[RMDB]
Structure probing data (2A3 and DMS) for a 177-nucleotide construct.
For DMS the reverse transcriptase was MarathonRT.
The data come from the RNA Mapping Database (RMDB), library OK1LIB.
The RNA was probed in 150 mM KOAc, 10 mM MgCl2 and 150 mM bicine (pH 8.5) at 24 C.
RNA sequence: GGGAACGACUCGAGUAGAGUCGAAAAGAGUAUGUGCUGUACUCAAGCAUCAGGGUACGGUCACCGAUGCCGAUCGCCAAAGCACCACCGGAACCGCCUUCGCCGAUGACGGUGCAGAUGACGGGAAGUCACUCGGACUAUUCGUAGUCCGAGUGACAAAAGAAACAACAACAACAAC
Reactivity to 2A3 in 0.01 (KOAc 150mM, MgCl2 10mM, bicine 150mM(pH8.5), 24C), signal-to-noise 2, nucleotides 027 to 126: g110a010g020u190a080u260g070u030g040c050u060g010u010a020c000u010c050a010a020g050c020a100u060c060a040g000g040g000u040a020c070g030g080u120c060a000c020c000g010a000u060g010c040c000g050a050u040c030g000c040c040a100a050a040g030c030a010c010c030a030c020c060g030g000a030a030c030c010g040c050c010u080u070c030g010c020c000g030a030u100g050a100c070g020g000u000g000c020a010g030a140u080g020a030c040g010g000g040a080a020
Reactivity to DMS in 0.01 (KOAc 150mM, MgCl2 10mM, bicine 150mM(pH8.5), 24C), signal-to-noise 1, nucleotides 027 to 126: g040a050g020u000a040u000g050u010g000c000u010g010u000a010c030u000c000a020a090g000c090a010u000c110a010g000g030g000u050a040c050g000g000u000c030a040c020c090g040a040u020g040c030c070g000a110u000c050g030c050c080a080a060a070g000c060a030c070c090a070c070c050g000g000a100a110c090c020g000c000c000u000u000c060g040c030c000g000a110u020g000a110c080g020g000u000g010c000a040g010a060u000g000a110c060g000g010g000a030a150